RNA sequence: GGGAACGACUCGAGUAGAGUCGAAAAGACGUAAUCCGCGCAAAUCCACAAACGCCAACGAUGAGCGUUUCGCUGUAGCCGCUAAAGGCAACAGCCGGGGCCGCCUGAGCCCUGUUACCAAAGACGGGAAACUCGAUGCCAUUCGUGGCAUCGAGAACCACGUUACAGCGUUCGCGCUGUAACGUGGAAAAGAAACAACAACAACAAC
Reactivity to 2A3 in 0.01 (KOAc 150mM, MgCl2 10mM, bicine 150mM(pH8.5), 24C), signal-to-noise 1, nucleotides 027 to 156: g060a020c020g050u000a080a020u040c030c110g000c070g000c110a060a100a060u040c130c080a080c130a180a010a030c030g000c020c030a130a050c140g180a150u130g020a070g100c000g000u010u070u060c040g000c000u040g020u050a130g000c000c000g100c170u300a120a110a060g010g000c000a000a000c000a000g010c030c000g010g000g000g000c010c060g020c040c000u000g000a010g010c000c000c000u020g040u070u000a000c000c000a020a000a000g070a030c010g000g050g000a040a000a040c000u000c000g000a000u000g000c000c010a020u090u080c200g040u150g010g010c010a000u010c000g000a000g000a000a000
An RNA of 207 nucleotides, treated with 2A3 and read out base by base. The RNA was probed in 150 mM KOAc, 10 mM MgCl2 and 150 mM bicine (pH 8.5) at 24 C. 2A3 adducts were read by reverse transcription with SuperScript II with manganese. Reactivities are given for positions 27 through 156.